The record gives the reactivity of an RNA of 177 nucleotides to 2A3 and DMS. For 2A3 the reverse transcriptase was SuperScript II with manganese. The data come from the RNA Mapping Database (RMDB), library OK2TRN. For DMS, 808 sequencing reads were counted. High DMS reactivity at an A or C suggests that its Watson-Crick edge is free. The RNA was probed in 150 mM KOAc, 10 mM MgCl2 and 150 mM bicine (pH 8.5) at 24 C. High 2A3 reactivity points to a flexible backbone, as in loops and unpaired stretches.

RNA sequence: GGGAACGACUCGAGUAGAGUCGAAAAUCAAUCACUGCUCGCUCAGUACAGCAAAACGAUCUCAUUAGGUCUUAAAGCUUGUUACUUCAAAGACUCUAGGUGGAUUGGUACCUACGUUGAUAUAAACCGCUCUAGGUAGGUUCGCCUACCUAGAGCGAAAAGAAACAACAACAACAAC
Reactivity to 2A3 in 0.01 (KOAc 150mM, MgCl2 10mM, bicine 150mM(pH8.5), 24C), signal-to-noise 1, nucleotides 027 to 126: u030c010a000a040u020c010a000c080u080g010c020u060c060g040c020u060c030a010g030u040a100c000a020g000c020a000a000a090a090c060g000a010u000c010u000c000a200u220u240a020g050g000u010c000u010u110a030a040a010g010c030u100u170g060u140u050a050c000u060u120c100a070a140a070g030a060c010u000c010u110a080g110g020u050g110g040a080u020u020g040g030u080a030c050c010u020a030c120g040u100u100g110a000u030a050u060a190a100a000c050
Reactivity to DMS in 0.01 (KOAc 150mM, MgCl2 10mM, bicine 150mM(pH8.5), 24C), signal-to-noise 1, nucleotides 027 to 126: u000c020a090a060u000c090a150c080u000g020c040u020c170g000c080u000c040a070g020u000a060c080a050g050c070a090a080a100a200c190g000a030u000c000u000c120a120u010u000a080g010g000u010c000u010u010a160a080a070g030c010u010u010g030u000u010a080c020u040u010c080a010a030a100g010a080c010u000c050u000a010g010g000u000g010g040a050u000u000g010g000u000a120c020c070u000a040c100g000u030u030g000a100u030a150u010a030a100a110c090